[RMDB]
RNA sequence: GGGAACGACUCGAGUAGAGUCGAAAAAGAACCCUGGGAUCCGGAUCAGACCACAGCGGCAUCGACCUGGCAGUGACAGCGAGCGAAAGCACGAAACGGAAGGGCCUGUUCUUCGACUCGCACAAGGCUAUCAUACGGUCUUCGGACCGUAUGAUAGAAAAGAAACAACAACAACAAC
Reactivity to 2A3 in 0.01 (KOAc 150mM, MgCl2 10mM, bicine 150mM(pH8.5), 24C), signal-to-noise 2, nucleotides 027 to 126: a010g060a060a080c000c000c000u000g050g020g010a080u020c040c010g120g000a060u100c040a020g100a090c030c000a010c050a100g020c030g060g000c020a050u050c020g070a100c020c030u010g020g070c020a030g000u000g060a070c080a100g030c030g030a010g010c000g060a060a040a000g000c020a020c100g050a100a100a000c030g070g050a060a060g090g020g000c020c010u010g020u030u020c070u030u020c020g120a180c030u030c010g060c020a050c030a020a080g110g010
Reactivity to DMS in 0.01 (KOAc 150mM, MgCl2 10mM, bicine 150mM(pH8.5), 24C), signal-to-noise 2, nucleotides 027 to 126: a060g010a180a100c010c030c010u020g010g020g030a050u000c040c110g000g030a070u000c110a070g020a120c070c060a010c030a050g000c090g030g000c030a100u000c090g000a120c080c040u010g010g000c050a050g000u000g020a120c090a110g000c030g020a050g020c010g010a050a050a040g000c050a020c080g000a060a210a070c070g000g020a090a100g000g000g020c160c030u000g000u000u000c160u000u000c020g000a060c000u000c010g030c110a130c150a080a060g020g000